[RMDB]
RNA sequence: GGGAACGACUCGAGUAGAGUCGAAAAGAUAUGGAGGCACAAAGAUGUCAGCUAUGAAGUCGGAAACGAUGGAGCUGUCAUCUUGCCUCCUAAGUCAAAGCAGUAUAACCUUCGGGUUAUACUGCAACGUCUUAAUCCUGUUCGCAGGAUUAAGACGAAAAGAAACAACAACAACAAC
Reactivity to 2A3 in 0.01 (KOAc 150mM, MgCl2 10mM, bicine 150mM(pH8.5), 24C), signal-to-noise 4, nucleotides 027 to 126: g020a000u070a050u120g000g010a010g010g000c030a050c090a150a160a000g000a010u000g000u020c000a000g000c000u070a250u300g050a040a000g010u010c000g020g050a050a070a040c010g010a010u040g010g030a000g010c010u010g020u010c000a000u000c000u000u010g010c010c000u010c000c000u000a040a000g020u020c050a070a110a050g000c000a010g010u000a000u000a000a000c010c000u030u110c300g040g000g000u000u000a000u010a000c000u020g000c000a000a000
Reactivity to DMS in 0.01 (KOAc 150mM, MgCl2 10mM, bicine 150mM(pH8.5), 24C), signal-to-noise 3, nucleotides 027 to 126: g000a040u000a300u000g000g000a010g000g070c010a110c300a300a050a000g010a000u000g000u000c020a000g010c000u010a160u010g010a070a210g000u000c000g000g000a080a110a140c000g010a010u000g000g000a000g030c000u000g010u010c010a000u000c010u000u000g010c010c000u000c000c000u000a010a020g010u000c030a050a110a110g000c010a000g020u000a000u000a000a000c000c010u010u000c190g000g000g000u000u000a000u000a000c000u000g000c010a000a020
The record gives the reactivity of an RNA of 177 nucleotides to 2A3 and DMS.
The DMS profile rests on 2,433 reads.
For 2A3, 7,563 sequencing reads were counted.